The record gives the reactivity of an RNA of 177 nucleotides to 2A3 and DMS.
The 2A3 profile rests on 787 reads.
2A3 adducts were read by reverse transcription with SuperScript II with manganese.
[RMDB]
RNA sequence: GGGAACGACUCGAGUAGAGUCGAAAAGGGUUUGGAUUACAUCAAUAGUCACAUGAGCAGUAGUAAACAGAACAAGAAGUACUGCGGUUAUUCAAGUUCAAAGUUCACACUAUCGCAAUAAAUUGAAGUUCGUACCAGUAUUCGUACUGGUACGAACAAAAGAAACAACAACAACAAC
Reactivity to 2A3 in 0.01 (KOAc 150mM, MgCl2 10mM, bicine 150mM(pH8.5), 24C), signal-to-noise 1, nucleotides 027 to 126: g010g030g000u060u060u060g020g040a050u010u040a020c030a040u160c030a010a130u020a140g100u080c020a020c040a220u220g030a010g000c040a000g010u070a010g000u030a000a070a030c000a020g010a050a010c000a050a030g120a040a010g040u020a000c000u020g030c030g110g020u000u000a020u000u010c080a090a000g020u000u010c000a190a070a010g010u060u010c040a010c000a010c030u040a070u130c020g000c040a090a050u070a250a070a090u100u070g080a170a000
Reactivity to DMS in 0.01 (KOAc 150mM, MgCl2 10mM, bicine 150mM(pH8.5), 24C), signal-to-noise 1, nucleotides 027 to 126: g000g020g000u030u010u000g020g020a090u000u000a040c110a100u000c080a040a050u000a050g050u020c050a020c090a050u000g000a180g000c020a070g010u000a060g020u000a070a000a060c060a070g030a070a020c100a040a230g000a060a050g010u000a040c000u000g040c160g020g030u000u000a130u020u000c040a070a290g010u010u000c020a000a120a020g010u000u000c070a100c090a070c030u000a020u020c050g030c030a050a050u020a020a130a190u000u000g000a060a050